This 177-nucleotide RNA was probed chemically with DMS and 2A3. Values cover nucleotides 27 to 126. It was measured as part of the RMDB library TTRDEL. 2A3 is a SHAPE reagent: it acylates the 2'-hydroxyl of flexible nucleotides of all four kinds. DMS adducts were read by reverse transcription with MarathonRT. The RNA was probed in 150 mM KOAc, 10 mM MgCl2 and 150 mM bicine (pH 8.5) at 24 C. For 2A3 the reverse transcriptase was SuperScript II with manganese.
RNA sequence: GGGAACGACUCGAGUAGAGUCGAAAAGAUAUGGAAUCCUACGGGAGCUCCUCGGAAACGAGUGAGCGAAGAACGUAGGGAUUCCUAAGUCAAAACACCUUUGACUGGUUCGCCAGUCAAAGGUGAACAAGUACCCUUGGUUCGCCAAGGGUACUUGAAAAGAAACAACAACAACAAC
Reactivity to DMS in 0.01 (KOAc 150mM, MgCl2 10mM, bicine 150mM(pH8.5), 24C), signal-to-noise 2, nucleotides 027 to 126: g010a050u010a300u010g000g000a000a000u000c000c000u000a010c000g000g020g010a090g010c000u000c010c000u010c000g010g000a100a080a190c000g000a010g010u010g010a000g030c000g000a040a100g000a080a160c000g000u000a020g010g020g000a000u000u000c000c000u010a010a100g000u010c030a090a080a170a200c020a000c000c000u000u000u010g010a020c000u000g010g010u000u000c200g010c000c000a000g010u000c000a000a000a000g000g020u000g000a010a040
Reactivity to 2A3 in 0.01 (KOAc 150mM, MgCl2 10mM, bicine 150mM(pH8.5), 24C), signal-to-noise 1, nucleotides 027 to 126: g000a020u070a040u190g000g000a020a010u000c000c000u020a000c020g010g000g040a010g000c010u010c000c010u000c000g040g000a100a070a060c010g010a000g040u300g020a010g050c010g000a010a010g010a010a000c010g000u020a080g150g100g000a000u000u050c010c000u010a120a020g040u000c020a000a040a090a110c020a000c000c000u000u030u000g010a010c020u000g000g050u060u090c270g030c070c000a010g010u000c000a010a000a000g020g010u010g000a000a010